[RMDB]
RNA sequence: GGGAACGACUCGAGUAGAGUCGAAAAAUACAGUAGGAAAGUACAAAGAAGCAAUCAAACCGAGCAGUGAAAUGAUGGCUUCAGUCCAAAAUGGGCAAACACUGCAGACGGAGCCAAAGGCAAAUAAUAACAUGUAUCGCUUCGGCGAUACAUGUUAAAAAGAAACAACAACAACAAC
Reactivity to DMS in 0.01 (KOAc 150mM, MgCl2 10mM, bicine 150mM(pH8.5), 24C), signal-to-noise 1, nucleotides 027 to 126: a040u000a050c100a000g050u000a000g000g030a050a070a100g000u000a020c220a050a100a060g030a000a020g030c050a060a040u000c050a060a050a190c000c100g020a090g000c070a010g000u020g000a090a070a030u000g000a030u000g020g010c010u000u000c020a130g060u000c000c010a000a050a140a040u000g000g000g010c020a060a160a190c080a030c050u000g000c030a130g010a150c050g000g010a120g000c000c040a000a080a100g020g010c000a030a090a030u030a030a160
An RNA of 177 nucleotides, treated with DMS and read out base by base. For DMS, 611 sequencing reads were counted. Reactivities are rounded to 0.1 and cut off at 0 and 3. For DMS the reverse transcriptase was MarathonRT.